[RMDB]
RNA sequence: GGGAACGACUCGAGUAGAGUCGAAAAGCUUAAAAGACAGGACUUUAGAAUCUUAUGCUGAAGCUAAAGAAGCUUUUUUUGAAGACAAAUAUUGGAUCUUGCAUGACACUACCAUCUAUGAAAUGCCCACUUGGGUUUAUUUCGAUAAACCCAAGUGAAAAGAAACAACAACAACAAC
Reactivity to 2A3 in 0.01 (KOAc 150mM, MgCl2 10mM, bicine 150mM(pH8.5), 24C), signal-to-noise 2, nucleotides 027 to 126: g000c000u080u050a050a140a020a000g060a050c040a080g070g090a080c010u100u120u060a040g050a050a040u050c030u050u100a060u290g020c020u020g030a040a010g020c020u050a160a000a000g070a040a000g000c000u070u050u000u000u000u060u160g120a080a050g020a020c000a040a120a120u200a090u150u100g040g020a050u070c040u010u060g010c060a000u040g000a020c000a000c070u030a040c030c010a020u030c030u050a100u100g050a070a100a100u070g000c080c000
Reactivity to DMS in 0.01 (KOAc 150mM, MgCl2 10mM, bicine 150mM(pH8.5), 24C), signal-to-noise 3, nucleotides 027 to 126: g020c010u000u010a050a070a150a140g010a120c120a080g010g010a150c010u000u000u000a020g000a110a080u010c050u010u000a100u010g010c100u000g020a020a020g010c020u000a030a030a080g000a090a070g000c030u000u010u000u000u000u010u010g010a090a080g000a130c050a050a060a100u010a080u010u000g020g010a080u000c040u000u010g010c040a050u000g000a080c050a020c080u010a090c030c030a020u000c060u000a100u000g010a020a050a080u000g000c030c090